[RMDB]
RNA sequence: GGGAACGACUCGAGUAGAGUCGAAAAUGAAUCAAACUCUCUACAUUGGAAACAAGAUGACCACUGUCCCAAAGUCAGUAUGCCUAGUUUGUCAAUCUUUGGACAUACUCUAAACAGUGAUAGGCAGCUUGUGUUUGACAUCUACAAUGUCCACAUCAGUGUUAACAGGAUUCGUCCUGUUAACACUAAAAGAAACAACAACAACAAC
Reactivity to 2A3 in 0.01 (KOAc 150mM, MgCl2 10mM, bicine 150mM(pH8.5), 24C), signal-to-noise 6, nucleotides 027 to 156: u110g060a010a040u080c050a040a040a070c030u050c020u000c030u110a040c020a140u070u160g060g030a070a060a020c010a020a040g030a070u040g050a050c010c010a010c020u020g060u090c020c030c030a050a020a000g060u080c000a020g010u020a070u040g000c000c020u050a080g030u070u090u150g190u130c030a060a080u060c100u070u080u100g010g010a010c000a020u030a030c020u010c030u100a070a100a040c050a010g000u010g090a040u060a050g070g000c010a000g020c010u030u020g000u030g050u070u080u070g020a020c030a040u030c010u040a020c070a120a080u080g020u000c040c000a040c010a150u150c090
Reactivity to DMS in 0.01 (KOAc 150mM, MgCl2 10mM, bicine 150mM(pH8.5), 24C), signal-to-noise 3, nucleotides 027 to 156: u000g020a120a100u010c050a080a080a110c060u000c050u000c030u010a110c060a130u010u010g020g000a170a150a050c020a040a090g000a070u010g010a120c020c010a070c030u000g040u000c010c000c060a050a020a030g010u000c030a040g020u020a030u000g020c010c010u000a070g030u020u000u000g050u000c120a080a080u000c110u000u000u020g000g010a040c010a030u000a040c010u010c030u000a060a040a040c020a050g030u000g010a090u000a090g020g010c010a020g010c010u010u000g020u000g000u000u010u000g020a100c050a070u000c050u010a100c080a040a090u000g020u000c040c040a060c080a110u000c060

Chemical mapping of a 207-nucleotide RNA with 2A3 and DMS.
The DMS profile rests on 7,856 reads.
It was measured as part of the RMDB library OK3TST.
For 2A3, 4,357 sequencing reads were counted.
For DMS the reverse transcriptase was MarathonRT.